[RMDB]
RNA sequence: GGGAACGACUCGAGUAGAGUCGAAAAGGCUGCAGAUGUGGGAUCGCAUGCUGGUCUCCCUGAGUCUGGCCCUGCACUGCUCGCCGAUUUCACUGGAAGUGGUGCCCACGCCACAGCUGCAGGCGAUGGCGCUUGACAUAACCCGGCGUGCAAACAAAUCGAUGAAGUGAUUCGUCACUUCAUCGAUAAAAGAAACAACAACAACAAC
Reactivity to 2A3 in 0.01 (KOAc 150mM, MgCl2 10mM, bicine 150mM(pH8.5), 24C), signal-to-noise 4, nucleotides 027 to 156: g030g000c020u220g030c090a010g030a190u110g070u300g010g010g000a010u040c040g010c220a130u250g100c170u140g010g020u000c000u010c030c010c010u040g020a010g010u000c010u010g040g020c000c000c010u040g060c070a070c050u030g010c010u020c040g030c010c000g030a090u060u100u060c130a100c050u060g020g030a120a100g090u070g050g030u030g020c000c010c000a010c010g010c000c010a110c010a110g090c110u190g020c060a060g020g000c010g070a080u050g050g000c010g000c040u030u060g060a070c010a020u150a060a040c000c010c000g020g000c000g000u020g030c010a000a020a040c070a020a160
Reactivity to DMS in 0.01 (KOAc 150mM, MgCl2 10mM, bicine 150mM(pH8.5), 24C), signal-to-noise 2, nucleotides 027 to 156: g040g020c010u000g000c050a000g000a070u000g000u000g000g020g000a010u000c050g020c080a240u000g010c120u000g010g000u000c000u000c020c020c010u010g010a120g030u000c000u000g000g000c010c000c010u000g000c000a100c100u000g010c000u010c070g000c030c040g020a100u000u000u010c100a170c170u010g000g000a160a130g000u010g030g000u000g020c050c030c100a180c010g010c010c000a100c060a100g000c070u000g030c040a180g020g020c040g000a130u000g010g010c000g000c040u000u000g000a290c020a110u000a070a090c090c030c010g020g030c000g000u000g000c060a040a070a110c090a070a130